[RMDB]
RNA sequence: GGGAACGACUCGAGUAGAGUCGAAAAGAUAUGGAAUGACAAGCCUUCAACAGCUAUACUCGGAAACGAGUAUAGACAUGAAGCUUGCAUUCCUAAGUCAAAAUCCGAACGAGUUCGCUCGUUCGGAGAUUAACUCCCCGUUCGCGGGGAGUUAAUCAAAAGAAACAACAACAACAAC
Reactivity to DMS in 0.01 (KOAc 150mM, MgCl2 10mM, bicine 150mM(pH8.5), 24C), signal-to-noise 2, nucleotides 027 to 126: g000a020u000a290u010g000g000a000a000u000g000a140c000a020a010g010c120c100u020u000c180a050a120c300a200g000c000u000a000u000a000c000u000c010g040g000a030a080a120c000g000a030g010u000a000u000a000g010a030c050a200u000g010a070a050g000c000u000u010g010c000a010u000u000c000c000u010a020a080g010u000c020a060a110a090a260u000c000c000g010a030a020c000g000a020g050u010u000c300g040c010u000c010g010u000u000c010g000g010a010
Reactivity to 2A3 in 0.01 (KOAc 150mM, MgCl2 10mM, bicine 150mM(pH8.5), 24C), signal-to-noise 2, nucleotides 027 to 126: g030a010u040a030u100g000g060a000a000u020g110a300c000a010a010g010c040c050u300u250c140a300a250c010a110g000c000u000a000u010a030c010u010c000g000g010a060a020a000c000g020a020g020u000a010u000a010g000a000c000a100u200g160a060a000g000c000u020u000g000c010a020u000u000c000c000u010a060a000g020u020c020a150a060a050a300u010c010c000g000a010a010c010g010a010g000u070u110c250g180c150u010c020g000u000u010c000g000g020a000